[RMDB]
RNA sequence: GGGAACGACUCGAGUAGAGUCGAAAAGUCAACCUCUUAAGUUCCUCUUCUUCCUCCCUGCUGAGGUUCUUCCCUCCCGCCGUCAGCUGCUUCUUCUUGUUCUCGAGGGCCUUCCUUCUUCGGUGAUCCUGCCUCUCCUUGUCGGUGAAUCCUCCCCGUAUAUCAUAGACUUCGGUCUAUGAUAUACAAAAGAAACAACAACAACAAC
Reactivity to DMS in 0.01 (KOAc 150mM, MgCl2 10mM, bicine 150mM(pH8.5), 24C), signal-to-noise 2, nucleotides 027 to 156: g020u000c050a050a090c020c020u010c040u000u000a130a180g010u000u000c010c000u010c040u000u000c040u000u000c030c020u010c000c000c020u000g010c090u010g010a100g040g010u000u000c040u010u000c020c010c000u000c030c020c040g000c060c020g020u010c030a130g050c000u000g000c040u000u000c020u000u000c040u000u000g010u000u000c020u010c030g000a110g030g030g000c030c020u000u000c030c020u000u000c050u000u000c070g010g000u000g020a070u000c030c000u000g040c030c020u000c030u000c030c040u000u000g010u000c030g010g000u000g000a090a140u000c010c030u000c010c010c020c170
Reactivity to 2A3 in 0.01 (KOAc 150mM, MgCl2 10mM, bicine 150mM(pH8.5), 24C), signal-to-noise 2, nucleotides 027 to 156: g080u050c020a010a080c020c010u070c030u110u190a120a070g020u030u030c030c000u000c030u140u000c010u130u060c020c010u040c020c010c000u010g000c020u040g020a030g000g040u020u070c020u040u030c010c010c000u030c020c020c000g020c000c000g040u040c010a030g000c020u030g040c000u020u040c000u070u000c000u050u120g040u120u060c030u020c030g030a040g010g030g030c020c020u060u070c020c010u060u110c020u090u080c060g010g040u030g000a050u040c000c010u030g060c010c000u060c020u000c000c020u040u040g040u030c030g030g090u060g080a030a060u010c000c020u010c030c000c000c000